[RMDB]
RNA sequence: GGGAACGACUCGAGUAGAGUCGAAAAGCCGAUGAAUUGCCGAGAAGCCUGGCUCGAAAUCGUCGACGAAUCGACGACGGUCCUGCCAUGAGACCGUAACGAGGACAUGUCGCCUCGAAUGGCGUCGUAUAACAUGAGUGGUUCGCCACUCAUGUAACUAAAGGUUGAAGUUCGCUUCAACCUUUAGAAAAGAAACAACAACAACAAC
Reactivity to DMS in 0.01 (KOAc 150mM, MgCl2 10mM, bicine 150mM(pH8.5), 24C), signal-to-noise 2, nucleotides 027 to 156: g050c000c020g060a110u000g000a050a110u010u000g000c030c020g020a120g030a130a140g060c040c040u000g030g050c030u060c040g020a050a020a060u010c020g040u000c000g040a300c100g030a110a180u000c020g020a060c000g010a010c040g000g000u000c010c010u010g000c010c170a110u020g010a070g000a010c010c000g010u000a060a080c050g010a100g010g000a070c040a120u010g030u000c070g010c010c000u000c010g000a040a050u000g010g000c000g040u000c020g020u000a080u000a080a060c010a010u000g020a000g030u010g020g030u000u010c290g030c020c000a010c010u010c010a010u000g000u010a020a120
Reactivity to 2A3 in 0.01 (KOAc 150mM, MgCl2 10mM, bicine 150mM(pH8.5), 24C), signal-to-noise 3, nucleotides 027 to 156: g030c000c000g010a060u080g090a050a290u160u150g050c020c010g030a030g050a150a030g010c050c100u080g060g000c020u040c010g070a110a070a040u010c010g010u000c000g020a070c050g060a080a080u090c000g010a020c000g000a010c000g010g000u000c000c010u060g000c020c000a030u010g040a010g000a100c010c000g000u080a000a010c000g000a010g000g000a020c050a120u250g060u240c120g020c000c000u020c000g000a010a000u020g010g020c000g020u030c030g000u050a120u040a200a020c010a010u000g000a000g000u010g030g010u080u060c200g030c030c000a000c010u010c000a000u000g010u000a000a000
Conditions: 150 mM KOAc, 10 mM MgCl2 and 150 mM bicine (pH 8.5), 24 C. The record gives the reactivity of an RNA of 207 nucleotides to DMS and 2A3. The 2A3 profile rests on 1,728 reads. The data come from the RNA Mapping Database (RMDB), library M2RFPK.